[RMDB]
RNA sequence: GGGAACGACUCGAGUAGAGUCGAAAAAGUACUUCAAAGGUUGUGUGCUCUGUAUUGACCGUGAGUUCAUUGUAGAAUUGUUAUAACGGAUAUUGUUAAGUGCAUUUCAUUAUCUCUACAUGGAAGAAAUUCAGCAAAAGUAAGCAUCGGGUAAGAACAUUACGAGGGAGUUCGCUCCCUCGUAAUGAAAAGAAACAACAACAACAAC
Reactivity to DMS in 0.01 (KOAc 150mM, MgCl2 10mM, bicine 150mM(pH8.5), 24C), signal-to-noise 1, nucleotides 027 to 156: a130g000u000a040c050u000u000c040a070a110a130g010g030u000u000g040u010g010u000g020c030u000c070u000g040u020a030u020u010g010a070c040c080g020u000g030a140g020u000u000c040a050u000u010g020u000a060g020a080a120u020u000g020u000u000a080u000a070a030c040g010g010a080u000a050u000u010g020u010u000a050a200g040u010g020c030a130u000u000u000c050a040u000u000a040u000c040u000c020u000a060c060a060u010g000g000a090a070g030a070a080a150u000u000c030a120g010c020a010a040a050a120g020u000a050a110g000c040a040u000c060g020g040g020u000a050a050g000a050a100
Reactivity to 2A3 in 0.01 (KOAc 150mM, MgCl2 10mM, bicine 150mM(pH8.5), 24C), signal-to-noise 2, nucleotides 027 to 156: a000g070u070a030c070u040u110c070a050a020a210g070g000u050u030g010u030g000u010g080c050u030c030u020g050u010a100u040u100g070a070c000c050g120u050g020a070g000u020u090c050a090u080u070g000u020a050g050a120a170u070u030g040u140u120a200u080a160a080c050g010g050a040u030a030u220u060g000u130u060a080a070g010u010g160c010a050u000u070u000c000a000u000u160a050u030c040u000c000u010a050c010a080u040g020g010a050a020g020a040a060a020u070u010c050a010g040c020a010a000a080a000g090u050a160a000g000c010a010u100c050g000g000g020u030a060a010g040a100a030